[RMDB]
RNA sequence: GGGAACGACUCGAGUAGAGUCGAAAAUAUUCUAUCGAUGUAUUUACGAGGUAUUACACAAAGGAGCUUGAAAAAAUGACGAAACGGUACAAAGAUAUGUUGCGUUUAUGCCCGACAUAUGCGAAAGUCCAGAUUAUAGAUUCGUCUAUAAUCUGGAAAAAGAAACAACAACAACAAC
Reactivity to 2A3 in 0.01 (KOAc 150mM, MgCl2 10mM, bicine 150mM(pH8.5), 24C), signal-to-noise 2, nucleotides 027 to 126: u120a040u050u050c030u020a090u100c030g060a070u030g010u070a040u110u130u100a040c020g010a030g020g070u050a080u070u160a070c090a010c000a030a130a050g090g020a040g000c040u070u070g050a040a020a020a010a040a080u080g010a060c050g030a070a080a000c060g020g000u030a030c020a050a140a000g060a010u040a010u120g060u010u070g040c030g000u060u010u090a050u120g030c030c000c010g010a030c040a010u080a010u080g050c040g010a120a010a000g040
Reactivity to DMS in 0.01 (KOAc 150mM, MgCl2 10mM, bicine 150mM(pH8.5), 24C), signal-to-noise 6, nucleotides 027 to 126: u010a080u000u010c040u010a050u010c050g020a190u000g010u000a020u010u000u020a100c080g010a110g000g010u010a060u000u000a070c090a080c080a040a080a110g010g000a070g010c050u000u000g000a000a030a040a050a080a110u010g010a060c030g000a060a050a070c100g020g010u000a030c060a040a080a180g000a060u010a020u010g010u000u000g020c160g010u000u010u000a040u020g010c030c040c010g010a100c080a030u000a020u000g020c060g000a080a090a080g010